RNA sequence: GGGAACGACUCGAGUAGAGUCGAAAAUAUAUCCGAGAGUGUUUGUUACGGGUGAGGGACGUGCAGUUAAUGCUGAAUUCAUGGAUCGUGACCAGGAUAAUGUCCAACGACGGGACGUAUUUCGCUUCUCAGCCAGCGCUGACGCUAGACAAAGCAGCGAUCUCACUAUUUUCGAAUAGUGAGAUCGAAAAGAAACAACAACAACAAC
Reactivity to 2A3 in 0.01 (KOAc 150mM, MgCl2 10mM, bicine 150mM(pH8.5), 24C), signal-to-noise 3, nucleotides 027 to 156: u140a000u010a010u000c040c080g030a040g000a020g060u050g010u060u070u090g050u020u090a020c000g020g020g020u060g040a090g050g010g000a020c040g020u070g020c010a040g020u100u210a140a030u160g010c010u050g070a120a100u100u040c030a060u120g050g000a060u020c060g050u040g080a120c050c030a040g010g010a030u060a130a070u220g030u000c040c010a020a010c020g050a010c000g030g000g010a000c000g000u030a040u040u040u040c030g010c030u080u020c040u000c020a020g000c020c010a030g050c020g020c090u010g030a030c030g000c020u040a020g020a170c130a100a070a020g040c020a030g020
Reactivity to DMS in 0.01 (KOAc 150mM, MgCl2 10mM, bicine 150mM(pH8.5), 24C), signal-to-noise 2, nucleotides 027 to 156: u000a070u000a060u000c050c020g030a110g000a090g000u000g030u000u000u000g020u020u000a120c020g040g040g060u010g000a110g020g010g000a060c080g010u020g030c030a070g020u000u000a050a130u010g010c000u000g000a090a090u000u000c070a100u000g020g000a100u010c060g010u000g030a110c020c010a100g010g000a070u000a060a140u000g010u010c010c010a110a060c060g010a070c080g000g070g010a040c050g020u010a070u000u000u000c050g010c040u000u000c060u010c040a100g010c030c000a110g000c100g000c030u010g000a090c040g010c030u020a080g030a110c060a090a080a090g030c050a150g030
Source information:
Chemical mapping of a 207-nucleotide RNA with 2A3 and DMS. The data come from the RNA Mapping Database (RMDB), library OK3TST. For DMS, 3,904 sequencing reads were counted.